[RMDB]
RNA sequence: GGGAACGACUCGAGUAGAGUCGAAAAACAAGAGCAGGAUUAGGGAUAUCCGAGAUGGCCACACUUUUGAGGAGCUUAGCAUUGUUCAAAAGAAACAAGGACAAACCACCCAUUACAUCAGGAUCCGUACCCGGUCUGAAUUCGUUCAGACCGGGUAAAAAGAAACAACAACAACAAC
Reactivity to DMS in 0.01 (KOAc 150mM, MgCl2 10mM, bicine 150mM(pH8.5), 24C), signal-to-noise 2, nucleotides 027 to 126: a100c140a100a080g000a080g020c040a090g000g000a090u020u010a000g000g000g020a070u000a030u000c010c020g030a090g000a060u020g030g010c040c010a080c080a080c060u000u000u000u000g040a070g000g000a000g030c020u000u030a120g000c030a040u000u000g050u000u000c060a040a050a110a130g000a060a040a100c090a080a100g020g020a090c030a000a030a080c030c000a130c020c000c070a050u020u020a030c080a000u020c070a060g000g000a090u010c020c110g000
Reactivity to 2A3 in 0.01 (KOAc 150mM, MgCl2 10mM, bicine 150mM(pH8.5), 24C), signal-to-noise 2, nucleotides 027 to 126: a020c060a080a010g010a000g020c010a000g000g120a030u020u170a070g100g000g000a030u000a070u090c030c000g030a000g000a120u040g040g000c000c020a030c020a020c040u020u060u060u110g010a030g020g020a060g010c000u020u170a030g000c000a170u150u000g040u090u060c020a020a040a040a000g110a030a050a000c140a090a070g000g010a010c020a000a000a000c020c000a010c040c000c000a070u150u110a040c000a030u060c050a010g080g030a000u000c010c010g000
The record gives the reactivity of an RNA of 177 nucleotides to DMS and 2A3. The DMS profile rests on 2,024 reads. The RNA was probed in 150 mM KOAc, 10 mM MgCl2 and 150 mM bicine (pH 8.5) at 24 C. 2A3 is a SHAPE reagent: it acylates the 2'-hydroxyl of flexible nucleotides of all four kinds. For 2A3, 1,439 sequencing reads were counted.